[RMDB]
Structure probing data (DMS and 2A3) for a 177-nucleotide construct.

RNA sequence: GGGAACGACUCGAGUAGAGUCGAAAACACGUAGUUCAGCGUGGCCUUGCCCAGCGCCAGAGGCGAUAGGAUGUUCUGGUCGAUGGCCUCCUCGCGCUCCUGAUCGUUCAUCAGGGCCACACGGGACUCCUACACAGCCGUUCGCGGCUGUGUAGGAAAAAGAAACAACAACAACAAC
Reactivity to DMS in 0.01 (KOAc 150mM, MgCl2 10mM, bicine 150mM(pH8.5), 24C), signal-to-noise 2, nucleotides 027 to 126: c070a070c230g000u030a040g000u000u000c000a050g030c040g000u000g000g080c010c010u000u000g000c300c200c300a030g010c060g000c100c150a050g000a070g040g000c030g000a090u000a010g000g000a000u010g020u000u050c180u020g000g040u010c100g000a120u010g010g000c010c020u000c000c010u060c140g000c000g000c000u000c030c040u030g000a120u000c070g000u050u000c130a060u020c020a000g000g010g020c000c020a020c010a080c020g020g000g010a030c000
Reactivity to 2A3 in 0.01 (KOAc 150mM, MgCl2 10mM, bicine 150mM(pH8.5), 24C), signal-to-noise 3, nucleotides 027 to 126: c150a010c070g150u130a030g010u030u020c040a020g020c020g060u000g000g020c000c000u010u040g040c040c010c000a040g010c010g000c020c010a030g000a040g030g000c050g040a040u020a020g100g010a000u040g050u220u220c050u190g150g070u090c060g090a120u160g090g000c000c000u010c000c010u030c040g000c000g000c000u000c000c010u060g010a090u140c030g100u130u090c030a070u050c000a000g000g000g000c000c000a030c000a000c030g000g020g000a010c000